[RMDB]
RNA sequence: GGGAACGACUCGAGUAGAGUCGAAAACGGAGUUGUCCGCAGCUUUACUGGAUCGCUUCGCAACUUAAUCGGAGGGGUCUGCAGCUUUACUGGAUCGCUUCGCAACUUGACUGGAGAUGUCCGCAGCGCGAUCCCCGAUUUUCGAAUCGGGGAUCGCAAAAGAAACAACAACAACAAC
Reactivity to 2A3 in 0.01 (KOAc 150mM, MgCl2 10mM, bicine 150mM(pH8.5), 24C), signal-to-noise 1, nucleotides 027 to 126: c000g000g000a010g000u000u100g000u020c000c000g000c030a050g020c050u150u000u250a030c060u110g010g000a020u000c000g030c190u010u000c000g010c040a000a050c150u050u050a130a090u160c020g010g000a070g000g050g000g000u000c000u070g000c040a010g000c010u070u060u110a300c200u240g040g020a000u070c000g000c080u020u040c000g000c000a040a010c010u030u150g010a070c050u020g010g060a070g000a040u130g010u000c000c040g010c060a020g060c060

Chemical mapping of a 177-nucleotide RNA with 2A3. It was measured as part of the RMDB library OK1LIB. The 2A3 profile rests on 527 reads. For 2A3 the reverse transcriptase was SuperScript II with manganese. The RNA was probed in 150 mM KOAc, 10 mM MgCl2 and 150 mM bicine (pH 8.5) at 24 C.